[RMDB]
RNA sequence: GGGAACGACUCGAGUAGAGUCGAAAACGCAUGCGAAAGCAUGCGGCUAUGCUAAUGCAUGGCGACCGCGAUCAUGUAGAGUAGGCGGCGAUAGUGGUUAUUAUUCCGCUAUCGAUUACCAGUGUCUGUUAUUAUUCAGAUACAUGGACCUCUACGAAUGAUGAGUAGUAUUCGUACUACUCAUCAUAAAAGAAACAACAACAACAAC
Reactivity to DMS in 0.01 (KOAc 150mM, MgCl2 10mM, bicine 150mM(pH8.5), 24C), signal-to-noise 6, nucleotides 027 to 156: c010g010c000a000u000g010c000g020a190a130a260g020c000a000u000g010c000g040g020c020u000a020u000g010c010u000a120a170u010g030c000a000u000g020g010c030g000a120c030c010g020c040g000a140u000c100a140u000g010u000a020g000a040g000u000a160g030g020c090g000g000c020g000a010u010a010g020u000g030g030u000u010a140u010u000a300u000u000c000c010g030c000u000a010u000c000g010a130u000u010a060c000c010a260g010u000g010u010c000u000g020u010u000a180u000u000a230u000u000c020a030g010a030u000a010c020a080u000g020g010a190c130c000u000c020u010a020c010g010a120
Reactivity to 2A3 in 0.01 (KOAc 150mM, MgCl2 10mM, bicine 150mM(pH8.5), 24C), signal-to-noise 9, nucleotides 027 to 156: c010g000c000a000u000g000c000g050a080a010a010g000c000a000u000g000c000g000g000c000u000a000u000g000c040u200a300a070u300g000c000a000u010g000g000c020g040a060c000c000g000c010g020a070u140c050a110u190g000u010a000g000a010g010u120a100g060g050c000g000g000c000g000a000u000a000g010u010g060g050u060u050a140u200u060a130u260u080c000c000g000c000u000a000u000c000g000a010u000u060a040c000c000a000g000u000g000u000c000u000g090u060u050a240u210u060a150u130u140c000a000g000a000u000a000c010a020u010g000g010a050c000c000u000c000u000a000c000g010a020
Chemical mapping of a 207-nucleotide RNA with DMS and 2A3. It was measured as part of the RMDB library OK3TST. For DMS, 19,523 sequencing reads were counted. For 2A3 the reverse transcriptase was SuperScript II with manganese.